The data come from the RNA Mapping Database (RMDB), library OK2TRN. The record gives the reactivity of an RNA of 177 nucleotides to DMS and 2A3. The 2A3 profile rests on 1,581 reads. 2A3 adducts were read by reverse transcription with SuperScript II with manganese. The RNA was probed in 150 mM KOAc, 10 mM MgCl2 and 150 mM bicine (pH 8.5) at 24 C. Reactivities are rounded to 0.1 and cut off at 0 and 3.
[RMDB]
RNA sequence: GGGAACGACUCGAGUAGAGUCGAAAAAUAAUCCGAAAGUGGGCAAGCUGAGGGGAAUCAGUGUGUGCCACAGGACAAUAUUAAAAUACAUGCACAAUUCUCAUACAGACUGGCCAACAAGUUUGCCGGUACGCUUUAGUUUCGACUAAAGCGUACCAAAAGAAACAACAACAACAAC
Reactivity to DMS in 0.01 (KOAc 150mM, MgCl2 10mM, bicine 150mM(pH8.5), 24C), signal-to-noise 1, nucleotides 027 to 126: a080u000a100a190u000c030c000g020a110a150a070g000u000g020g060g020c000a030a000g000c000u000g000a110g000g000g000g000a170a000u000c040a080g040u000g000u000g000u010g010c090c130a080c160a070g010g000a130c240a130a040u000a130u000u010a080a040a020a060u010a030c030a000u000g020c000a000c040a300a050u000u000c120u000c030a050u010a060c000a000g020a150c010u000g000g080c010c020a050a020c090a180a080g010u000u010u000g000c220c100
Reactivity to 2A3 in 0.01 (KOAc 150mM, MgCl2 10mM, bicine 150mM(pH8.5), 24C), signal-to-noise 2, nucleotides 027 to 126: a000u080a020a100u020c030c000g060a140a090a020g070u090g040g000g020c010a030a020g000c020u010g020a100g030g030g000g000a030a040u030c050a260g000u030g010u000g000u000g080c030c040a030c030a030g050g060a010c100a130a050u160a070u250u280a000a040a010a030u140a000c010a010u020g000c000a000c030a070a040u060u000c050u030c020a090u120a300c000a020g150a300c000u020g010g000c000c000a050a050c010a060a090g030u040u080u010g080c050c060